[RMDB]
RNA sequence: GGGAACGACUCGAGUAGAGUCGAAAAUCACGAAUGGUCUUAUGUUGGCUCAGUUCGUAAGAACUGGAGCACUCACUACCGCAGAGGCAGCGAAUGCAGCUGCUACCAUGGGGGCAAGUGGAGCAUUUGGUAUUUUCAAUGCGGUAUUAGCAGCAAACCAGGUAAAUACCUUCGGGUAUUUACCUGGAAAAGAAACAACAACAACAAC
Reactivity to 2A3 in 0.01 (KOAc 150mM, MgCl2 10mM, bicine 150mM(pH8.5), 24C), signal-to-noise 1, nucleotides 027 to 156: u060c030a020c040g050a000a130u230g010g010u030c020u040u160a090u130g020u050u140g110g000c000u000c040a030g000u000u010c000g100u150a070a080g000a000a000c020u050g120g060a000g000c010a030c000u010c000a020c000u000a000c040c010g000c000a000g000a010g030g080c030a050g000c000g080a190a030u130g050c060a010g040c000u010g000c000u010a030c000c000a110u220g020g000g000g100g000c040a200a000g020u050g000g000a040g040c020a000u000u000u080g030g040u100a260u010u020u060u130c050a220a060u060g000c050g020g020u000a010u110u060a030g100c070a000g090c040a050a000a000